[RMDB]
RNA sequence: GGGAACGACUCGAGUAGAGUCGAAAAGGGGUCAUCGCUCACGAGGUAGCUGAGGUAUGGCUGAAGCCUCCACGGCCAUACUACCCACCAGCUACUACCCACCGUGAGCCGGAUGACGGAGGCACCCAAAAGCACUAAGGCUUCGGCCUUAGUGCAAUCGUAGCUUUAUCUUCGGAUAAAGCUACGAAAAAGAAACAACAACAACAAC
Reactivity to DMS in 0.01 (KOAc 150mM, MgCl2 10mM, bicine 150mM(pH8.5), 24C), signal-to-noise 1, nucleotides 027 to 156: g020g020g010g000u000c000a000u000c000g000c000u000c000a020c000g000a150g010g010u000a000g000c000u000g000a080g040g020u000a050u000g010g080c000u000g050a070a130g010c030c000u030c050c010a300c100g000g040c030c000a130u000a010c000u000a000c030c030c010a300c040c000a000g010c010u000a060c010u000a020c020c040c140a300c000c000g020u000g030a080g030c030c020g040g000a060u030g000a080c000g030g020a080g030g030c080a010c080c010c000a070a030a090a170g030c010a040c010u000a010a030g040g040c000u000u000c300g040g000c030c000u000u000a040g000u000g010c010a010a010
Reactivity to 2A3 in 0.01 (KOAc 150mM, MgCl2 10mM, bicine 150mM(pH8.5), 24C), signal-to-noise 1, nucleotides 027 to 156: g050g010g050g000u020c000a010u010c010g010c000u010c000a000c000g000a000g020g010u000a000g000c000u000g010a020g030g000u000a000u000g000g000c000u010g010a090a010g000c000c000u000c000c000a040c000g000g000c000c000a010u000a010c000u050a050c060c060c000a030c010c000a000g000c000u010a000c000u010a010c030c040c020a040c000c000g000u000g010a010g010c000c000g250g010a010u000g000a000c000g010g000a000g010g000c010a010c000c000c000a030a100a010a020g000c000a000c000u000a000a000g000g000c000u050u300c300g140g000c000c000u000u000a000g000u000g010c000a000a000